The record gives the reactivity of an RNA of 177 nucleotides to DMS and 2A3. For DMS the reverse transcriptase was MarathonRT. Reactivities are given for positions 27 through 126. For DMS, 12,828 sequencing reads were counted.
RNA sequence: GGGAACGACUCGAGUAGAGUCGAAAAGCCUUUCUCUAUAGAACCAGCUAUUGGAACUCUUAAUGUGGGAGAGUCCAUGCAACUGGAAGUGGAGUUUGAGCCACAGAGUGUGGGCGAUCACAGUGGAUCUAUCUUACUUCUUCGGAAGUAAGAUAGAAAAAGAAACAACAACAACAAC
Reactivity to DMS in 0.01 (KOAc 150mM, MgCl2 10mM, bicine 150mM(pH8.5), 24C), signal-to-noise 8, nucleotides 027 to 126: g000c010c010u000u000u000c000u000c020u000a170u000a130g010a160a150c000c010a010g010c020u000a140u000u000g020g000a060a070c010u000c000u000u000a100a090u010g010u010g010g010g000a020g000a060g010u000c000c000a010u000g010c170a110a110c010u000g000g010a080a150g020u000g000g000a060g000u000u010u000g010a170g010c010c010a020c040a060g010a060g010u000g010u000g000g000g010c070g010a100u000c070a060c090a080g010u000g000g000a200
Reactivity to 2A3 in 0.01 (KOAc 150mM, MgCl2 10mM, bicine 150mM(pH8.5), 24C), signal-to-noise 6, nucleotides 027 to 126: g000c010c000u030u290u040c050u000c010u030a150u030a200g070a180a120c010c000a010g020c020u050a110u080u050g030g030a160a120c000u000c000u060u110a260a160u300g060u210g150g170g000a020g000a030g030u000c010c000a000u010g000c020a070a040c010u000g010g040a070a030g010u010g020g010a030g000u040u160u200g070a040g040c000c010a010c020a030g100a030g040u090g020u080g030g030g030c030g020a040u100c050a030c030a060g100u110g080g040a040